Source: RMDB library 15KLIB, as collected in RNAgym. This 170-nucleotide RNA was probed chemically with DMS and 2A3. 2A3 adducts were read by reverse transcription with SuperScript II with manganese. The RNA was probed in 150 mM KOAc, 10 mM MgCl2 and 150 mM bicine (pH 8.5) at 24 C. DMS adducts were read by reverse transcription with MarathonRT.
RNA sequence: GGGAACGACUCGAGUAGAGUCGAAAAGUCAGACACUUUAGACAAAUUGUCUGAUUACUGUACGUUUGUUUGUUGGGCUCAUGGCUUUGAAUUAACGUCUGCAUCAUACUUUUGCAAGAUAGGUAAGGAAGUGUACGAUUCGUCGUACACAAAAGAAACAACAACAACAAC
Reactivity to DMS in 0.01 (KOAc 150mM, MgCl2 10mM, bicine 150mM(pH8.5), 24C), signal-to-noise 6, nucleotides 027 to 129: g000u020c000a060g000a000c030a000c140u030u000u040a110g040a100c270a120a050a030u010u040g020u000c000u040g000a070u020u060a080c010u020g040u000a110c140g040u030u020u020g020u010u020u000g000u000u000g010g000g060c130u040c080a030u040g040g000c000u000u020u010g030a170a080u040u010a060a110c050g000u000c050u040g020c060a010u040c210a120u030a060c000u000u040u030u040g000c070a050a060g000a000u000a050g030g000u030a050a060g040g030a030a080
Reactivity to 2A3 in 0.01 (KOAc 150mM, MgCl2 10mM, bicine 150mM(pH8.5), 24C), signal-to-noise 4, nucleotides 027 to 129: g030u030c010a000g020a010c020a020c000u060u100u100a090g080a160c130a020a070a020u020u030g000u020c000u000g020a020u020u160a100c000u120g070u020a060c040g050u030u090u080g040u060u030u070g080u060u020g000g000g020c000u040c150a070u140g030g000c000u040u040u060g040a050a070u110u030a140a030c010g030u000c010u010g000c000a030u060c020a010u120a230c050u050u070u020u010g010c000a000a120g030a120u050a080g040g120u050a050a000g070g030a030a090